Source information:
Chemical mapping of a 207-nucleotide RNA with DMS and 2A3. For DMS the reverse transcriptase was MarathonRT.

[RMDB]
RNA sequence: GGGAACGACUCGAGUAGAGUCGAAAAUGACGUUAAACUGCUGACUCAUAAAUACUGACACCGGUUGCUCAACAGGCUGUGUGGGACAAUAGAAUAACAAGGCUGUCAAUUUGAGCUUGACGGCUGCAAAACCUGCAGUACUUCGGUACUGCAGGAAGACUAAUCAUGCGUUCGCGCAUGAUUAGUCAAAAGAAACAACAACAACAAC
Reactivity to DMS in 0.01 (KOAc 150mM, MgCl2 10mM, bicine 150mM(pH8.5), 24C), signal-to-noise 1, nucleotides 027 to 156: u000g000a050c060g000u000u030a060a080a110c000u000g000c000u000g000a090c050u020c080a080u000a070a070a090u000a160c100u000g000a110c010a100c010c050g070g020u010u020g000c050u000c070a080a180c090a070g000g060c040u000g040u000g000u000g030g000g000a120c050a040a050u000a100g000a080a140u020a140a120c040a110a260g010g010c000u040g000u000c010a040a040u000u000u000g000a080g040c150u000u010g010a060c030g000g020c000u020g080c060a120a050a110a110c010c010u010g040c020a000g010u000a010c010u000u000c300g040g110u000a020c010u000g020c000a000g020g030a010a040
Reactivity to 2A3 in 0.01 (KOAc 150mM, MgCl2 10mM, bicine 150mM(pH8.5), 24C), signal-to-noise 3, nucleotides 027 to 156: u070g010a010c030g000u060u050a050a070a080c040u090g020c020u010g010a060c010u030c070a040u090a160a100a020u140a110c060u080g060a020c020a030c040c020g080g000u010u040g010c030u030c060a050a090c020a110g050g000c010u040g030u010g000u020g080g020g020a000c020a060a040u100a110g120a070a080u130a080a010c040a110a020g050g000c010u010g000u000c000a000a010u050u030u130g030a040g030c000u000u000g000a000c000g020g010c010u020g010c010a020a010a030a180c000c000u000g000c000a000g000u000a010c010u010u040c080g100g000u000a000c000u000g000c000a000g000g000a000a000
Conditions: 150 mM KOAc, 10 mM MgCl2 and 150 mM bicine (pH 8.5), 24 C.